[RMDB]
This 177-nucleotide RNA was probed chemically with 2A3 and DMS. For DMS, 2,628 sequencing reads were counted.

RNA sequence: GGGAACGACUCGAGUAGAGUCGAAAAUUUCAACCUGUCAGCCACGAAAAGAACGGCAGAACUUACCCCCAGAUAAUCAGCGCCGCCAUUCCUGCCGAACCGACGAUCAGGCGCCACCAGCCAAACACUAAUAGUACGGAUUCGUCCGUACUAUUAGAAAAGAAACAACAACAACAAC
Reactivity to 2A3 in 0.01 (KOAc 150mM, MgCl2 10mM, bicine 150mM(pH8.5), 24C), signal-to-noise 1, nucleotides 027 to 126: u040u060u100c010a060a030c010c000u040g040u040c000a020g070c010c020a010c030g060a140a030a000a080g060a080a070c040g020g040c010a010g020a080a090c150u210u210a110c000c000c000c000c000a010g030a130u150a070a070u100c020a050g070c010g000c050c010g010c010c010a050u060u030c010c020u000g000c020c010g000a020a030c020c020g020a030c020g010a030u090c050a000g000g090c030g000c020c000a040c000c000a000g020c000c000a100a000a000c000a030
Reactivity to DMS in 0.01 (KOAc 150mM, MgCl2 10mM, bicine 150mM(pH8.5), 24C), signal-to-noise 4, nucleotides 027 to 126: u020u000u010c090a120a100c060c010u000g030u000c060a070g010c040c020a070c080g020a060a050a100a130g000a070a150c100g010g010c030a030g000a120a060c090u000u000a250c060c030c020c030c050a090g010a060u010a080a080u000c060a100g030c090g030c030c010g020c050c040a090u000u000c040c020u000g000c060c020g010a070a090c050c040g030a060c070g010a050u000c080a060g010g000c050g020c040c040a030c040c020a070g030c020c030a070a060a080c190a130

2A3 adducts were read by reverse transcription with SuperScript II with manganese. The reactions ran in a buffer of 150 mM KOAc, 10 mM MgCl2 and 150 mM bicine (pH 8.5), at 24 C. For 2A3, 1,051 sequencing reads were counted. The data come from the RNA Mapping Database (RMDB), library OK2TST.